The data come from the RNA Mapping Database (RMDB), library TTRDES. This 177-nucleotide RNA was probed chemically with 2A3 and DMS. Values cover nucleotides 27 to 126. The reactions ran in a buffer of 150 mM KOAc, 10 mM MgCl2 and 150 mM bicine (pH 8.5), at 24 C.
RNA sequence: GGGAACGACUCGAGUAGAGUCGAAAAGAUAUGGACUGUCAUAGGGAGCUGCAUAUCGGAAACGAUAUGACAGCGACGAUCUAUACAGUCCUAAGUCAAAAGGUGAGUUGGUUCGCCAACUCACCAAUCUGAUAAGAUGCUUCGGCAUCUUAUCAGAAAAAGAAACAACAACAACAAC
Reactivity to 2A3 in 0.01 (KOAc 150mM, MgCl2 10mM, bicine 150mM(pH8.5), 24C), signal-to-noise 1, nucleotides 027 to 126: g010a010u020a000u050g000g000a000c000u000g020u030c080a030u220a070g000g010g030a050g010c000u000g050c000a000u000a000u020c000g010g010a000a020a000c000g010a000u030a000u020g180a280c000a000g000c010g010a030c010g000a010u000c020u030a060u020a110c020a000g000u040c000c000u020a000a000g000u010c010a060a020a090a120g000g000u010g010a000g010u000u020g050g000u050u210c290g040c080c000a000a000c010u000c000a000c000c000a010a010
Reactivity to DMS in 0.01 (KOAc 150mM, MgCl2 10mM, bicine 150mM(pH8.5), 24C), signal-to-noise 2, nucleotides 027 to 126: g000a010u010a000u010g000g010a030c000u000g010u000c300a030u000a000g010g000g000a020g030c000u000g000c000a000u000a000u000c000g040g000a010a000a030c010g010a010u000a000u000g000a130c020a010g010c000g000a030c300g000a010u010c000u000a030u000a020c000a010g010u000c000c000u000a000a030g000u010c020a120a050a130a130g020g020u010g010a000g010u010u000g000g000u000u030c290g000c020c000a010a000c000u000c000a010c000c000a010a040